[RMDB]
RNA sequence: GGGAACGACUCGAGUAGAGUCGAAAAAGCGGUGGACCCGGGUGCUCCGACCGGAAUCGGCGACGCGAUCGGUGCGGGUGCUGGCGCCGGUGAGAACCUGUUGCUGCUCCCGCCCGGAAGCGCCGUGGGUGCGGGGUGAAUUCGUUCACCCCGCACCAAAAGAAACAACAACAACAAC
Reactivity to 2A3 in 0.01 (KOAc 150mM, MgCl2 10mM, bicine 150mM(pH8.5), 24C), signal-to-noise 1, nucleotides 027 to 126: a000g080c150g000g000u000g020g080a020c000c010c000g000g050g060u070g040c030u030c040c040g030a030c020c030g020g050a020a100u060c030g000g000c030g020a070c010g090c030g040a120u140c000g000g020u170g000c000g000g050g000u000g020c040u090g050g010c010g040c000c020g000g030u080g090a180g020a000a000c000c000u020g040u070u300g000c010u000g010c040u030c020c000c000g000c000c040c000g000g020a030a020g010c000g000c000c000g000u050g000
Annotation
Conditions: 150 mM KOAc, 10 mM MgCl2 and 150 mM bicine (pH 8.5), 24 C. An RNA of 177 nucleotides, treated with 2A3 and read out base by base. Reactivities are given for positions 27 through 126. It was measured as part of the RMDB library OK1LIB.